[RMDB]
RNA sequence: GGGAACGACUCGAGUAGAGUCGAAAACAACCUGGGAGUUACGUCCGGAUAUUGCACCAGGUGCAAUAGAACGGUAGACAUCAACUGAUGCGAGAGCAUCUCAACUUAUGGACCUUAGUGUAUCGCAAGACGACAGGUCCUGUCGGAAUUGCGUAGAACCUACCACUAGUUUCGACUAGUGGUAGGUAAAAGAAACAACAACAACAAC
Reactivity to DMS in 0.01 (KOAc 150mM, MgCl2 10mM, bicine 150mM(pH8.5), 24C), signal-to-noise 3, nucleotides 027 to 156: c040a070a300c030c030u000g000g030g020a140g040u000u010a120c070g040u000c010c020g030g000a260u000a010u000u000g020c000a050c040c110a150g040g030u000g020c020a000a070u010a030g020a060a170c000g030g010u000a110g010a090c050a140u000c060a100a160c080u010g000a030u000g010c000g020a300g000a300g010c000a020u000c000u010c040a050a100c130u000u000a060u000g020g000a050c010c000u000u000a120g010u010g020u000a090u010c030g040c160a150a140g000a140c020g000a080c110a010g000g010u000c030c020u010g010u000c010g000g000a150a170u000u000g010c010g020u010a160g010a090
Reactivity to 2A3 in 0.01 (KOAc 150mM, MgCl2 10mM, bicine 150mM(pH8.5), 24C), signal-to-noise 4, nucleotides 027 to 156: c030a010a100c000c010u050g010g010g010a080g010u070u080a040c060g060u000c010c000g000g020a040u010a000u000u020g010c010a020c060c190a180g180g080u000g000c010a010a000u010a030g150a280a000c010g020g000u040a040g050a080c030a110u070c070a040a070c050u090g000a000u010g000c020g000a060g000a010g070c000a030u020c010u010c030a030a200c050u150u100a080u140g080g020a040c020c010u030u140a070g020u060g040u150a070u160c000g000c000a030a020g020a030c010g000a010c020a020g220g070u170c140c020u000g000u030c010g000g050a300a130u030u020g000c010g000u010a010g040a090

Chemical mapping of a 207-nucleotide RNA with DMS and 2A3. The RNA was probed in 150 mM KOAc, 10 mM MgCl2 and 150 mM bicine (pH 8.5) at 24 C. Values cover nucleotides 27 to 156. The data come from the RNA Mapping Database (RMDB), library OK3TST. Reactivities are rounded to 0.1 and cut off at 0 and 3.